[RMDB]
RNA sequence: GGGAACGACUCGAGUAGAGUCGAAAAUAUACCUCUGGAUCACCCGGAAUUGUGUUAAAAUAGGGUUUUCUGAUUGCCUAAUCAUAUUAGCCCUUGAGAUUUUCCAACAAGAUCCUAGGUGGUGAGACUAAAGGGAUCGAUUCGUCGAUCCCUUUAGAAAAGAAACAACAACAACAAC
Reactivity to DMS in 0.01 (KOAc 150mM, MgCl2 10mM, bicine 150mM(pH8.5), 24C), signal-to-noise 4, nucleotides 027 to 126: u040a090u030a040c000c010u020c120u000g000g010a030u000c000a090c130c140c300g000g010a040a040u040u010g010u040g020u020u020a040a110a100a120u040a020g000g010g010u000u010u030u000c110u000g010a000u000u020g000c200c210u040a030a000u000c010a010u040a030u010u010a050g010c010c000c000u000u000g000a150g010a140u000u000u000u000c030c040a080a090c150a060a090g000a060u000c000c000u000a020g000g010u000g010g020u020g010a080g010a200
Reactivity to 2A3 in 0.01 (KOAc 150mM, MgCl2 10mM, bicine 150mM(pH8.5), 24C), signal-to-noise 2, nucleotides 027 to 126: u210a020u100a010c000c040u000c070u080g030g020a020u020c050a060c050c020c000g000g070a070a020u090u110g110u070g050u140u150a100a070a070a060u210a060g030g000g000u070u000u000u000c020u000g020a020u000u110g210c040c070u210a000a000u000c000a000u050a030u100u160a110g030c000c000c000u030u020g040a070g020a190u020u010u090u030c000c000a010a050c030a040a150g010a050u000c000c000u010a050g020g020u000g010g050u100g070a100g040a030